[RMDB]
This 207-nucleotide RNA was probed chemically with DMS and 2A3. 2A3 adducts were read by reverse transcription with SuperScript II with manganese. The 2A3 profile rests on 1,129 reads. DMS adducts were read by reverse transcription with MarathonRT. It was measured as part of the RMDB library OK3TST.
RNA sequence: GGGAACGACUCGAGUAGAGUCGAAAAGAAGAUCUCCCUCCCCUUGAAAAACGGGGCGACAAGCGUCCGCGCCCCGAUCUGGAGGAGACACUAGUCACACGCUCAGACGACCCGCCCUCCUACGAGGAGGCAGUGAAGCUUGGAAUGCCCACCACCACUAUCCCGUAACUUUCGAGUUACGGGAUAGAAAAGAAACAACAACAACAAC
Reactivity to DMS in 0.01 (KOAc 150mM, MgCl2 10mM, bicine 150mM(pH8.5), 24C), signal-to-noise 1, nucleotides 027 to 156: g010a200a070g000a240u000c020u010c020c010c020u000c050c000c020c020u000u000g010a050a090a000a110a130c060g030g000g030g060c020g000a040c000a050a070g020c030g050u040c030c080g010c060g010c010c080c000c000g020a020u010c030u020g000g000a110g020g000a110g000a070c050a160c060u010a110g000u000c030a110c050a110c080g010c030u000c010a120g030a070c020g000a250c080c040c010g000c140c000c010u010c020c020u000a130c120g010a110g050g010a050g050g030c020a070g030u000g010a120a090g020c040u010u000g010g020a070a120u020g000c020c000c030a090c040c020a110c000c030a190
Reactivity to 2A3 in 0.01 (KOAc 150mM, MgCl2 10mM, bicine 150mM(pH8.5), 24C), signal-to-noise 2, nucleotides 027 to 156: g060a050a030g030a150u060c020u040c030c030c030u050c000c010c000c000u040u070g070a070a050a040a020a020c020g010g000g000g000c000g010a050c020a120a060g070c000g090u060c030c020g030c010g010c000c000c000c000g000a040u020c030u060g020g020a040g040g010a010g010a000c020a040c020u100a050g110u050c020a030c010a010c120g030c030u050c040a020g000a220c030g030a040c030c000c000g060c050c010c000u020c000c000u040a070c110g020a030g010g010a020g010g000c020a020g010u070g070a040a020g020c040u010u030g050g050a110a030u100g000c010c020c000a020c020c000a030c030c010a030